This 177-nucleotide RNA was probed chemically with 2A3 and DMS. For DMS, 28,769 sequencing reads were counted. For 2A3 the reverse transcriptase was SuperScript II with manganese.
[RMDB]
RNA sequence: GGGAACGACUCGAGUAGAGUCGAAAAUCAGGUCUGGGGCUGAUGGUAAGUGUACGGUUCCCCUGGCACCGAUGCUACGGAAAAGUCCCGCUGAUGGGGUUUCCAUUGAAGUGGCCAACCCUCGGGGUGGCAUUCAAUAUUUCGAUAUUGAAUGCCAAAAAGAAACAACAACAACAAC
Reactivity to 2A3 in 0.01 (KOAc 150mM, MgCl2 10mM, bicine 150mM(pH8.5), 24C), signal-to-noise 3, nucleotides 027 to 126: u010c010a010g040g130u070c060u300g060g000g000g000c030u030g020a090u100g110g020u080a150a110g010u020g030u100a170c020g010g000u030u060c020c010c050c050u070g030g000c020a000c000c010g010a010u050g000c010u020a010c020g090g000a040a110a040a000g000u010c000c010c000g000c020u030g010a020u040g000g030g000g000u010u050u020c010c010a010u030u180g120a200a030g040u010g030g000c030c040a010a000c030c000c000u020c020g030g010g000g010
Reactivity to DMS in 0.01 (KOAc 150mM, MgCl2 10mM, bicine 150mM(pH8.5), 24C), signal-to-noise 9, nucleotides 027 to 126: u000c010a010g000g010u010c020u010g010g090g010g010c020u000g010a150u010g010g010u000a040a080g030u000g020u000a100c040g010g010u000u000c020c020c170c150u010g010g020c110a030c020c010g010a100u000g010c020u000a020c040g010g010a050a170a150a050g010u000c000c000c000g010c040u000g000a020u000g010g010g010g010u000u000u010c010c000a080u010u010g010a110a120g020u000g000g000c140c150a040a090c010c010c010u000c060g010g010g010g020